[RMDB]
RNA sequence: GGGAACGACUCGAGUAGAGUCGAAAAAUUUGGAAAUUGCUGGUGCAGACAUAGCAAAUCCUGGUUUAAAUACAACAUUUGUAGUGCCAUUAACUGGCAGUAUUAAACCUGAGACAGGUUCUGUACCCACUCUUGCGCAAUUCGUUGCGCAAGAGUGAAAAGAAACAACAACAACAAC
Reactivity to 2A3 in 0.01 (KOAc 150mM, MgCl2 10mM, bicine 150mM(pH8.5), 24C), signal-to-noise 1, nucleotides 027 to 126: a010u130u090u120g120g060a000a170a060u170u040g100c040u010g000g010u010g000c000a010g000a020c000a060u190a020g030c000a030a010a020u070c020c000u000g000g100u010u000u100a060a120a020u000a040c050a160a000c050a170u050u100u300g000u070a170g110u020g050c000c000a020u280u080a190a070c270u060g010g000c020a000g010u050a010u020u000a000a000a000c000c010u110g040a150g000a140c050a020g020g080u020u000c000u050g000u010a000c000c050
Reactivity to DMS in 0.01 (KOAc 150mM, MgCl2 10mM, bicine 150mM(pH8.5), 24C), signal-to-noise 1, nucleotides 027 to 126: a110u000u000u000g000g010a110a080a080u010u000g000c040u030g000g000u010g020c060a020g020a010c030a100u000a170g000c080a040a110a210u000c010c000u000g020g010u000u000u000a020a010a010u000a000c010a080a110c130a260u000u020u000g010u010a100g000u000g050c000c000a020u010u040a050a150c300u000g000g000c010a080g000u000a000u000u000a040a060a000c000c000u010g040a160g000a060c120a100g040g010u010u000c000u000g010u010a020c010c020
Chemical mapping of a 177-nucleotide RNA with 2A3 and DMS. For DMS, 677 sequencing reads were counted. The reactions ran in a buffer of 150 mM KOAc, 10 mM MgCl2 and 150 mM bicine (pH 8.5), at 24 C.